[RMDB]
RNA sequence: GGGAACGACUCGAGUAGAGUCGAAAAGAAAGAAAGAAACUUUGGAUGCCAACGGCGGAAGACUCGCACGUGACAUUGCUAAUUUUUUCCAUUUCACUGCGAGUGUUCCCGCGUUGAUUCCAAUUAAACCGCUUCCAACUUUCGAGUUGGAAGCGGUAAAAGAAACAACAACAACAAC
Reactivity to 2A3 in 0.01 (KOAc 150mM, MgCl2 10mM, bicine 150mM(pH8.5), 24C), signal-to-noise 1, nucleotides 027 to 126: g080a030a020a100g140a030a090a000g050a060a040a070c100u020u140u020g000g010a000u070g200c100c030a000a010c010g240g000c060g030g090a000a000g000a020c000u000c000g000c000a030c150g000u000g010a000c020a040u000u080g040c050u160a270a300u050u060u070u070u180u000c000c000a000u020u000u000c000a000c000u000g000c000g000a000g000u000g160u020u000c020c000c000g000c000g010u000u000g000a010u010u000c000c000a000a000u000u020a120a040
Conditions: 150 mM KOAc, 10 mM MgCl2 and 150 mM bicine (pH 8.5), 24 C. An RNA of 177 nucleotides, treated with 2A3 and read out base by base. For 2A3 the reverse transcriptase was SuperScript II with manganese. For 2A3, 577 sequencing reads were counted.